[RMDB]
RNA sequence: GGGAACGACUCGAGUAGAGUCGAAAAAAGAAACAUUGUUUAUGAAAAGGCACUUCGCAAUGUGUGCUCAAACAUUGCUUAUUCAAACACGCUUCACAAUGUGCGACAAAGAAACAUUGUUAUAAGAUCCACUAAGUCGCCUUCGGGCGACUUAGAAGAGAGAACUAGAGUUCGCUCUAGUUCUCUCAAAAGAAACAACAACAACAAC
Reactivity to DMS in 0.01 (KOAc 150mM, MgCl2 10mM, bicine 150mM(pH8.5), 24C), signal-to-noise 2, nucleotides 027 to 156: a160a090g000a150a050a060c030a050u000u000g010u000u000u000a190u020g000a210a080a140a140g010g000c020a030c040u000u000c130g000c070a070a040u010g020u000g040u000g000c060u000c100a070a090a070c060a040u000u010g000c080u000u010a040u010u020c060a080a110a060c040a060c070g050c070u010u000c150a130c090a020a070u000g040u000g020c020g010a140c140a080a060a100g040a100a060a040c000a010u000u010g020u000u010a080u000a090a060g010a190u000c090c040a140c020u000a010a010g010u000c020g030c000c010u000u010c270g080g020g040c000g000a010c010u010u010a010g000a030a130
Reactivity to 2A3 in 0.01 (KOAc 150mM, MgCl2 10mM, bicine 150mM(pH8.5), 24C), signal-to-noise 3, nucleotides 027 to 156: a000a000g150a010a040a000c030a050u120u140g030u110u090u120a140u100g080a060a110a050a080g110g010c010a000c010u030u030c050g020c000a020a010u020g010u000g010u010g010c080u070c160a030a010a010c000a000u000u000g010c020u050u130a150u130u070c080a030a040a050c010a030c100g000c020u010u010c010a000c000a010a010u000g000u000g000c010g040a080c130a080a130a050g050a010a060a000c010a010u010u010g010u000u050a120u030a110a030g040a060u040c020c010a040c030u000a000a000g000u010c000g000c000c000u020u060c090g080g030g000c000g000a000c000u000u000a000g000a010a000

The record gives the reactivity of an RNA of 207 nucleotides to DMS and 2A3. Conditions: 150 mM KOAc, 10 mM MgCl2 and 150 mM bicine (pH 8.5), 24 C. The 2A3 profile rests on 2,167 reads. For DMS, 2,105 sequencing reads were counted. High DMS reactivity at an A or C suggests that its Watson-Crick edge is free. For 2A3 the reverse transcriptase was SuperScript II with manganese.